RNA sequence: GGGAACGACUCGAGUAGAGUCGAAAACACGAUGGUACAUUCAGCCGUACGGAAACCAUCCGCCUUGCAACUUCGAUGGAACUAAUUACUGCCGGAUGGGAAAGCAUGCCUCAAUGUCCUGAUUCUCUCCUCGUGGCCAUCCGAAACGUACGCGCCGAAGCGAAUAUCUGUUCGCAGAUAUUCGCUUAAAAGAAACAACAACAACAAC
Reactivity to DMS in 0.01 (KOAc 150mM, MgCl2 10mM, bicine 150mM(pH8.5), 24C), signal-to-noise 1, nucleotides 027 to 156: c070a030c030g010a020u010g000g060u010a080c050a110u010u000c080a100g020c050c030g000u000a110c020g020g020a100a160a120c010c000a020u000c000c050g010c010c030u010u020g040c020a080a030c050u000u000c060g010a120u000g010g010a090a200c100u000a050a120u010u010a040c060u000g000c040c000g000g000a020u010g010g010g000a040a040a180g010c050a040u000g000c020c010u000c040a060a130u000g010u000c000c030u000g000a130u000u000c020u000c010u000c040c020u000c070g000u000g000g000c040c030a070u000c010c030g000a030a070a070c000g000u000a040c040g020c090g040c060c040g050
Reactivity to 2A3 in 0.01 (KOAc 150mM, MgCl2 10mM, bicine 150mM(pH8.5), 24C), signal-to-noise 4, nucleotides 027 to 156: c090a010c030g050a040u060g020g080u130a060c030a100u060u170c050a040g020c000c020g030u030a000c010g090g050a060a030a020c000c000a010u010c000c020g070c030c050u090u140g050c060a100a130c080u080u050c080g090a090u040g070g020a030a020c040u080a200a130u210u160a100c040u080g060c060c030g000g030a010u030g040g000g010a050a010a010g010c020a030u060g020c020c040u080c060a090a090u090g030u100c000c020u080g070a200u150u000c020u000c000u010c030c040u030c030g030u010g010g040c000c000a030u000c020c020g020a030a060a060c020g000u040a010c000g010c040g010c030c020g050